[RMDB]
RNA sequence: GGGAACGACUCGAGUAGAGUCGAAAACUGCCAUAACAGGAAUAAAGUAGUUCACAAGACCUCCCAUCAUAACAGGCAUUAUAAACGCAAAAACCAUUAUCAAUCCAUGCGAGGUAAUUAAAACGUUAUAAAACUGGUAAUCUCCAAACAAAACACCCAUACACCUCAUGUUCGCAUGAGGUGUAUGAAAAGAAACAACAACAACAAC
Reactivity to DMS in 0.01 (KOAc 150mM, MgCl2 10mM, bicine 150mM(pH8.5), 24C), signal-to-noise 2, nucleotides 027 to 156: c020u000g030c020c120a100u010a030a170c050a050g010g020a090a120u010a070a120a160g000u000a060g010u000u010c020a130c050a060a050g030a050c000c060u000c010c020c020a120u010c030a070u000a080a080c050a070g010g000c060a040u000u000a170u000a080a070a040c070g010c030a020a090a110a190a090c110c030a100u000u000a040u000c010a100a140u000c040c070a060u000g010c010g010a110g000g060u000a020a080u010u040a040a040a100a060c010g010u020u000a120u010a050a010a050a050c010u000g010g000u010a110a090u010c040u010c030c000a040a070a180c130a030a020a100a060c060a040c060c090
Reactivity to 2A3 in 0.01 (KOAc 150mM, MgCl2 10mM, bicine 150mM(pH8.5), 24C), signal-to-noise 2, nucleotides 027 to 156: c000u030g010c020c000a080u080a130a040c050a110g060g050a090a110u120a080a130a020g050u060a020g010u070u070c060a040c030a180a080g060a130c070c000u010c010c020c000a030u070c030a020u060a110a030c040a040g030g000c020a010u020u060a030u120a060a090a020c040g000c070a050a060a070a020a000c020c000a030u050u040a060u120c060a070a020u020c030c040a020u050g020c070g030a020g000g020u020a020a020u010u040a030a130a010a020c010g000u030u010a060u010a100a070a010a020c030u030g030g030u050a050a070u020c030u000c090c010a040a060a070c010a020a080a090a030c060a040c010c020

Annotation:
Structure probing data (DMS and 2A3) for a 207-nucleotide construct. Conditions: 150 mM KOAc, 10 mM MgCl2 and 150 mM bicine (pH 8.5), 24 C. For DMS, 1,977 sequencing reads were counted. For DMS the reverse transcriptase was MarathonRT.